Structure probing data (2A3 and DMS) for a 207-nucleotide construct.
Conditions: 150 mM KOAc, 10 mM MgCl2 and 150 mM bicine (pH 8.5), 24 C.
Reactivities are given for positions 27 through 156.
For DMS the reverse transcriptase was MarathonRT.
[RMDB]
RNA sequence: GGGAACGACUCGAGUAGAGUCGAAAAAAUUUUCAUUACUAUGUGCAUAUCUUACAUAGUGUUCAGAGUCAUAUUCUGGACUUUUCUAGGGAGGAAGGAAUCAAAAAGAACCAUAAGAUGCCAUCCUCGGAGCUCACAGUGAGCCGAGAUCAUGCCAUAUCAUCGUAAUAUUCGUAUUACGAUGAUAAAAAGAAACAACAACAACAAC
Reactivity to 2A3 in 0.01 (KOAc 150mM, MgCl2 10mM, bicine 150mM(pH8.5), 24C), signal-to-noise 5, nucleotides 027 to 156: a020a000u160u100u050u060c080a100u100u180a090c060u080a030u100g030u130g010c020a040u030a030u060c020u030u040a030c010a110u030a030g050u060g010u050u000c000a010g010a030g070u100c080a090u110a050u300u020c000u000g000g010a000c000u060u130u040u030c020u050a040g010g030g020a010g000g000a020a050g010g020a040a040u020c050a030a080a100a130a090g100a080a060c050c020a080u060a180a070g020a030u040g050c000c010a050u010c000c000u020c020g010g020a040g020c010u010c020a080c040a200g130u090g200a000g000c000c000g020a010g000a010u080c080a000u030g000c000c000a010
Reactivity to DMS in 0.01 (KOAc 150mM, MgCl2 10mM, bicine 150mM(pH8.5), 24C), signal-to-noise 3, nucleotides 027 to 156: a050a150u020u000u000u000c040a160u020u000a100c060u000a070u010g010u000g050c050a070u000a090u000c040u010u000a040c020a070u000a060g020u000g040u000u000c010a030g020a080g010u000c290a160u000a130u010u000c020u020g000g010a040c020u000u000u000u000c070u000a110g000g020g030a070g000g010a030a070g040g000a020a050u000c020a030a070a040a090a110g010a120a210c050c070a060u020a060a190g010a090u000g010c000c010a140u000c000c010u000c000g010g020a130g000c000u000c040a070c120a200g010u000g010a040g030c010c070g000a070g000a030u000c070a040u000g020c030c010a240